[RMDB]
RNA sequence: GGGAACGACUCGAGUAGAGUCGAAAAGCGGAGGUGGAUAUAACUCCUGAACCUGCGAAUGUUGAUGCAGAGAUUAAGAAGGGAUCCAAUGGUUUAGAGAUUUUUGUUCUCACUUCGGAGAAGGUGACAGGAUAUUAUUCUUCGGAAUAAUAUCCUGAAAAGAAACAACAACAACAAC
Reactivity to 2A3 in 0.01 (KOAc 150mM, MgCl2 10mM, bicine 150mM(pH8.5), 24C), signal-to-noise 9, nucleotides 027 to 126: g050c040g020g030a030g010g080u080g020g060a010u040a020u020a200a080c040u020c010c010u010g020a030a060c010c010u010g030c030g070a110a160u230g050u150u170g080a120u130g030c020a010g050a020g010a150u120u130a070a060g060a050a080g040g020g020a020u020c030c000a040a070u080g080g000u060u110u120a050g020a030g010a150u070u060u040u050u130g040u050u010c010u010c030a040c020u030u030c060g140g040a090g030a180a030g050g010u030g010a010
Reactivity to DMS in 0.01 (KOAc 150mM, MgCl2 10mM, bicine 150mM(pH8.5), 24C), signal-to-noise 8, nucleotides 027 to 126: g020c080g010g010a020g010g020u000g000g010a060u020a080u030a110a130c070u010c010c000u000g010a070a100c040c010u000g000c070g010a090a090u030g020u010u020g010a120u020g010c030a030g000a100g010a090u010u010a080a080g020a120a070g010g000g000a070u010c030c040a060a090u020g000g000u000u010u010a080g010a120g010a050u010u020u020u010u010g000u020u000c060u000c000a050c030u000u010c040g020g020a090g000a100a060g000g020u000g010a150